[RMDB]
RNA sequence: GGGAACGACUCGAGUAGAGUCGAAAAGAUAUGGAGGUAGGGAGUCAAACACCUCGGAAACGAGGUGUUUUGACGAGGAUCUACCCUCCUAAGUCAAAAGGACUUGCGAGUUCGCUCGCAAGUCCAACAGAGCACUAAUGUUCGCAUUAGUGCUCUGAAAAGAAACAACAACAACAAC
Reactivity to 2A3 in 0.01 (KOAc 150mM, MgCl2 10mM, bicine 150mM(pH8.5), 24C), signal-to-noise 1, nucleotides 027 to 126: g020a000u110a030u180g010g000a000g030g010u020a000g010g040g020a020g000u010c010a000a010a000c000a000c000c000u010c000g020g040a050a030a000c020g010a000g010g040u000g000u010u010u010u010g000a000c010g000a000g000g000a000u000c000u000a020c040c040c000u020c000c000u010a150a020g060u050c030a020a000a080a170g010g010a010c000u030u010g030c020g020a010g020u140u170c240g050c200u000c010g000c000a000a000g030u000c000c000a000a000
Reactivity to DMS in 0.01 (KOAc 150mM, MgCl2 10mM, bicine 150mM(pH8.5), 24C), signal-to-noise 3, nucleotides 027 to 126: g000a060u000a300u000g020g010a010g010g010u000a000g000g000g010a060g010u000c000a030a000a020c010a000c000c000u000c000g000g010a070a100a220c000g010a030g000g010u000g010u000u000u000u000g020a000c000g000a060g010g000a040u000c000u000a010c100c050c020u000c010c000u000a060a160g010u000c030a100a080a180a120g000g010a010c000u010u000g020c030g030a000g030u000u000c240g010c010u000c000g000c010a010a010g020u000c010c000a040a060
The record gives the reactivity of an RNA of 177 nucleotides to 2A3 and DMS. For DMS the reverse transcriptase was MarathonRT. It was measured as part of the RMDB library TTRDEL. The reactions ran in a buffer of 150 mM KOAc, 10 mM MgCl2 and 150 mM bicine (pH 8.5), at 24 C.